[RMDB]
This 177-nucleotide RNA was probed chemically with 2A3 and DMS. For 2A3, 1,481 sequencing reads were counted. As a SHAPE reagent, 2A3 marks flexible, mostly unpaired nucleotides at the ribose 2'-OH.
RNA sequence: GGGAACGACUCGAGUAGAGUCGAAAAGCGGAGAUGUUCGCAUCUCCGCAAAUCCCUGGAUGCAGCGAGUUAAAACGGAUACGUUGGCUAGUAUCCAUCGCAAAAGUAUUAGCUUCGGCUAAUACAACCACGUAAUUCUGUUCGCAGAAUUACGUGGAAAAGAAACAACAACAACAAC
Reactivity to 2A3 in 0.01 (KOAc 150mM, MgCl2 10mM, bicine 150mM(pH8.5), 24C), signal-to-noise 2, nucleotides 027 to 126: g000c010g010g000a000g020a010u010g010u130u170c190g030c090a010u000c010u010c000c000g000c000a010a010a010u010c000c000c000u010g020g000a000u020g000c020a000g000c010g090a210g170u110u150a110a190a010a030c030g040g100a200u290a160c000g050u020u060g050g020c010u020a090g010u000a000u030c000c000a050u120c080g090c030a010a030a020a160g000u000a000u020u000a000g000c000u040u040c270g100g040c000u000a000a000u000a020c000a000a030
Reactivity to DMS in 0.01 (KOAc 150mM, MgCl2 10mM, bicine 150mM(pH8.5), 24C), signal-to-noise 2, nucleotides 027 to 126: g000c010g030g000a000g030a020u000g000u030u020c230g040c000a040u000c000u000c010c000g070c000a000a040a060u000c000c010c000u000g000g000a010u010g010c010a050g020c000g010a130g010u000u020a050a060a040a080c050g000g010a050u000a090c060g010u000u000g020g000c060u010a110g020u000a010u000c000c010a100u010c120g000c190a040a080a080a160g010u000a000u000u000a010g000c000u000u030c160g020g000c000u000a010a000u010a000c010a100a160